RNA sequence: GGGAACGACUCGAGUAGAGUCGAAAAAUAGAAUGGAAUCAGGCUGGGCGCUGUGGCUCACGCCUGCACUUUGGGAGGCCGAGGCGGGCGGAUUACUUGAGGAUAGGAGUUCCAGACCAGCGUGGCCCCACGGCUAUUAAUUCGUUAAUAGCCGUGGAAAAGAAACAACAACAACAAC
Reactivity to DMS in 0.01 (KOAc 150mM, MgCl2 10mM, bicine 150mM(pH8.5), 24C), signal-to-noise 3, nucleotides 027 to 126: a080u040a060g010a170a070u030g000g020a110a080u030c010a000g010g030c010u000g000g000g000c090g050c080u010g010u010g000g020c010u020c000a060c060g030c000c010u000g000c040a030c040u000u010u050g030g000g010a130g000g020c020c030g000a040g000g010c030g010g010g000c010g000g010a200u010u030a070c060u020u020g000a140g020g000a130u040a060g000g030a080g030u000u020c040c000a070g000a130c020c000a000g000c020g000u010g000g010c060c050
Reactivity to 2A3 in 0.01 (KOAc 150mM, MgCl2 10mM, bicine 150mM(pH8.5), 24C), signal-to-noise 5, nucleotides 027 to 126: a000u190a020g180a050a090u140g070g060a080a090u150c020a030g080g000c000u000g010g010g010c080g040c150u060g060u150g120g000c010u010c000a020c060g000c010c000u000g000c010a080c020u070u080u080g040g040g010a100g040g070c010c020g020a020g000g040c010g010g010g000c030g030g000a050u110u170a130c030u080u160g070a080g080g080a050u100a100g120g000a040g030u100u110c000c000a030g020a050c000c000a000g010c020g040u040g000g010c000c000